[RMDB]
RNA sequence: GGGAACGACUCGAGUAGAGUCGAAAACAUGUGGCCGAAUGGCAUCCAGCACAACGAUCAAGUGAAACAGAGCUCCUCCAGCUGUGGUAGAACUAGGGCCAAAGUAUGUGAAAGUGUUCAAAGAUUCUUCGCAUUGAAUUCAAGCUCAUCAUUGUCAAUAAAUUUUAUCGUUCGCGAUAAAAUUUAUAAAAGAAACAACAACAACAAC
Reactivity to 2A3 in 0.01 (KOAc 150mM, MgCl2 10mM, bicine 150mM(pH8.5), 24C), signal-to-noise 2, nucleotides 027 to 156: c060a040u090g020u080g090g000c030c020g040a080a100u100g010g000c010a020u030c050c020a030g060c040a010c030a110a050c080g040a050u100c060a110a060g060u060g150a090a050a020c070a050g010a010g050c020u020c010c010u020c000c020a010g000c010u040g000u070g070g030u050a030g010a060a020c030u030a030g020g050g000c010c000a020a030a020g110u070a040u090g070u010g060a040a060a090g040u030g010u110u120c080a060a060a000g050a040u060u000c010u030u010c030g010c050a040u000u100g050a070a040u130u050c030a030a020g010c030u040c010a070u070c010a030u100u100g020u090c010a050
Reactivity to DMS in 0.01 (KOAc 150mM, MgCl2 10mM, bicine 150mM(pH8.5), 24C), signal-to-noise 3, nucleotides 027 to 156: c070a130u000g020u000g020g040c000c020g000a050a090u000g020g030c010a300u010c020c030a130g000c050a110c050a090a100c070g000a060u000c060a080a120g010u000g010a100a130a120c090a080g010a120g020c020u000c020c030u000c020c030a050g040c030u000g000u000g010g020u000a040g000a040a060c130u010a100g000g000g050c020c010a040a040a110g020u010a030u000g010u010g010a080a030a100g010u000g010u000u000c060a060a120a210g010a130u000u000c060u000u000c030g020c030a110u000u000g000a050a120u000u000c070a070a120g000c030u000c030a080u000c050a070u000u000g010u000c030a080
Background: Structure probing data (2A3 and DMS) for a 207-nucleotide construct. Reactivities are given for positions 27 through 156. 2A3 adducts were read by reverse transcription with SuperScript II with manganese. As a SHAPE reagent, 2A3 marks flexible, mostly unpaired nucleotides at the ribose 2'-OH. The reactions ran in a buffer of 150 mM KOAc, 10 mM MgCl2 and 150 mM bicine (pH 8.5), at 24 C.